[RMDB]
Structure probing data (DMS and 2A3) for a 177-nucleotide construct.

RNA sequence: GGGAACGACUCGAGUAGAGUCGAAAAGAAGGCCGUAGUAAAGAUGGAGCUGGAGGAAAGGGUGAGCGUUUAAUUAAUUUAACUCCAGCUCCGUAGUUAAGCGCUCACCCGUAUUAUGGCCGAGAAAGGCAUUACAAUACUUCGGUAUUGUAAUGCCAAAAGAAACAACAACAACAAC
Reactivity to DMS in 0.01 (KOAc 150mM, MgCl2 10mM, bicine 150mM(pH8.5), 24C), signal-to-noise 2, nucleotides 027 to 126: g000a210a150g000g010c000c030g040u000a000g000u000a020a040a170g010a100u020g000g000a030g000c000u000g000g000a020g010g000a120a010a120g000g020g000u000g000a000g020c000g010u000u000u040a000a030u020u020a070a060u020u020u050a130a100c000u000c030c000a020g000c010u000c000c000g000u030a030g040u000u010a010a060g000c000g000c020u000c010a020c000c000c000g000u000a000u000u000a000u000g000g020c010c020g000a140g000a080a090a070
Reactivity to 2A3 in 0.01 (KOAc 150mM, MgCl2 10mM, bicine 150mM(pH8.5), 24C), signal-to-noise 2, nucleotides 027 to 126: g100a080a050g000g010c000c000g000u000a000g000u020a010a120a100g130a100u300g040g000a000g000c030u080g080g030a000g100g170a240a150a120g000g010g000u010g010a000g000c000g030u000u020u090a020a100u030u100a000a130u190u100u270a000a020c000u020c000c040a000g000c030u030c020c000g000u000a010g000u000u050a050a000g000c000g000c010u000c000a000c000c000c000g000u010a000u000u000a000u000g000g000c000c040g000a030g030a030a040a000

The RNA was probed in 150 mM KOAc, 10 mM MgCl2 and 150 mM bicine (pH 8.5) at 24 C.